An RNA of 177 nucleotides, treated with DMS and 2A3 and read out base by base.
RNA sequence: GGGAACGACUCGAGUAGAGUCGAAAAGAGCCACCUCUCCCCGGCUGGAGUCCAGAGUUUUCUUUCAUGUGAAGUAGCACAGGGGUUUGGUGCAUAGGGAGAGAGUGCAUAUUUUCAUCACAAGGAACACGUCUGAGAAAUUCGUUUCUCAGACGUGAAAAGAAACAACAACAACAAC
Reactivity to DMS in 0.01 (KOAc 150mM, MgCl2 10mM, bicine 150mM(pH8.5), 24C), signal-to-noise 4, nucleotides 027 to 126: g000a190g020c090c030a030c010c000u000c000u000c020c000c000c280g000g010c030u010g000g000a110g010u000c000c030a080g020a090g050u000u000u000u000c020u030u010u010c070a140u060g000u050g010a040a060g010u000a000g000c010a100c070a100g000g000g010g030u010u000u030g000g030u010g000c070a080u040a120g000g020g000a040g000a030g010a050g030u030g000c050a070u010a030u020u000u000u000c020a130u020c100a070c140a050a150g000g010a040a170
Reactivity to 2A3 in 0.01 (KOAc 150mM, MgCl2 10mM, bicine 150mM(pH8.5), 24C), signal-to-noise 4, nucleotides 027 to 126: g080a010g070c030c010a010c000c000u000c020u020c000c000c010c000g060g000c010u000g040g040a100g290u010c010c030a020g040a040g100u030u050u050u050c030u050u090u040c080a140u200g070u080g090a010a030g010u160a000g010c020a010c070a070g010g010g000g000u030u060u040g020g000u050g030c030a090u140a030g000g010g000a020g000a010g000a040g000u060g010c000a020u040a060u180u120u060u070c100a140u080c040a090c020a130a100g090g010a090a040